[RMDB]
RNA sequence: GGGAACGACUCGAGUAGAGUCGAAAACAGUUUCUGGAGAACGUAGCGAGCGUAGCUGGCGGCUGUCAUGGUGACGGCUCGGGAAAACAUAUCCUUCAGGUUGGGUACAAAGUAGUUGUGAAAGUUGGCAUAAUGCACAAAGGUUGUAACAAUCACCAAAGAGUGUGUAUUUCGAUACACACUCUUUAAAAGAAACAACAACAACAAC
Reactivity to 2A3 in 0.01 (KOAc 150mM, MgCl2 10mM, bicine 150mM(pH8.5), 24C), signal-to-noise 2, nucleotides 027 to 156: c070a020g040u030u080u100c040u100g090g000a170g000a170a060c050g030u070a000g040c000g040a030g050c030g040u070a010g010c000u000g010g010c010g030g010c000u020g000u040c010a040u130g180g000u070g040a080c010g010g000c030u040c060g020g010g080a060a110a000a000c020a030u060a060u080c000c000u090u080c090a010g050g030u090u060g040g000g000u030a010c020a030a060a010g020u010a020g000u030u060g000u020g100a030a110a090g030u010u030g000g000c000a010u070a180a080u240g040c010a000c040a040a030a070g040g010u050u020g010u070a070a000c040a090a050u110c080a020c020c060
Reactivity to DMS in 0.01 (KOAc 150mM, MgCl2 10mM, bicine 150mM(pH8.5), 24C), signal-to-noise 3, nucleotides 027 to 156: c090a100g010u010u010u000c040u000g020g020a120g030a020a080c050g010u020a100g020c040g000a110g040c060g040u010a100g040c000u020g010g030c050g030g000c000u010g030u010c020a130u010g020g030u000g010a060c030g010g000c010u010c050g000g030g010a060a070a060a060c110a110u000a100u000c030c040u020u000c020a090g020g030u000u000g000g020g040u010a080c030a080a050a080g000u000a070g010u010u000g000u000g010a080a080a130g010u000u010g000g020c050a090u010a070a130u010g000c070a070c040a040a070a100g000g040u000u000g030u010a050a100c090a060a120u010c060a060c060c050
An RNA of 207 nucleotides, treated with 2A3 and DMS and read out base by base. High 2A3 reactivity points to a flexible backbone, as in loops and unpaired stretches. For 2A3, 855 sequencing reads were counted. The data come from the RNA Mapping Database (RMDB), library OK3TST. Conditions: 150 mM KOAc, 10 mM MgCl2 and 150 mM bicine (pH 8.5), 24 C. For DMS, 5,517 sequencing reads were counted.